[RMDB]
RNA sequence: GGGAACGACUCGAGUAGAGUCGAAAAAUUGCUGGGAGUGCAUGAAUGAGCGGCUCCGUGCUCUCCGUCCGUGAUCUCACCGUCAGGGCGCAUCUCGAUUCCGGCCCGCGCACGCUGCUCGAUGCGGUCUCGCUCGAUCUCGGUAAGGGCGAGAUCCUCUACCUAAGAGAUUCGUCUCUUAGGUAGAAAAAGAAACAACAACAACAAC
Reactivity to 2A3 in 0.01 (KOAc 150mM, MgCl2 10mM, bicine 150mM(pH8.5), 24C), signal-to-noise 7, nucleotides 027 to 156: a000u110u120g000c030u090g030g000g000a020g030u040g020c030a040u050g050a100a050u150g000a020g020c020g010g000c030u050c060c040g000u020g000c000u000c000u000c020c010g050u040c020c020g120u050g050a080u040c080u030c100a070c070c030g070u050c060a070g010g030g000c030g010c020a110u030c040u040c090g160a150u110u080c040c030g040g010c020c010c020g050c020g000c010a030c080g020c000u010g010c000u000c030g030a050u140g050c090g020g010u010c000u000c000g000c000u000c010g070a130u070c070u050c130g100g080u090a100a070g030g010g000c000g000a000g000a000u010c000c000
Reactivity to DMS in 0.01 (KOAc 150mM, MgCl2 10mM, bicine 150mM(pH8.5), 24C), signal-to-noise 2, nucleotides 027 to 156: a090u000u000g020c020u000g020g000g010a060g040u000g000c010a030u000g000a070a050u000g010a070g020c010g020g010c010u010c050c040g010u000g000c020u010c010u010c020c010g000u010c040c030g010u000g020a070u000c050u000c110a110c080c050g020u010c090a130g000g000g000c050g000c070a080u000c040u000c070g000a180u000u010c050c030g010g010c050c010c010g020c120g010c060a080c080g000c000u000g000c010u000c030g010a120u000g000c060g010g020u000c000u010c010g000c010u010c010g010a110u000c050u010c030g000g000u000a110a230g020g010g030c020g000a030g000a010u000c000c030
Source: RMDB library OK3TST, as collected in RNAgym. The record gives the reactivity of an RNA of 207 nucleotides to 2A3 and DMS. For DMS the reverse transcriptase was MarathonRT. The DMS profile rests on 11,262 reads. Conditions: 150 mM KOAc, 10 mM MgCl2 and 150 mM bicine (pH 8.5), 24 C. 2A3 adducts were read by reverse transcription with SuperScript II with manganese. For 2A3, 8,183 sequencing reads were counted.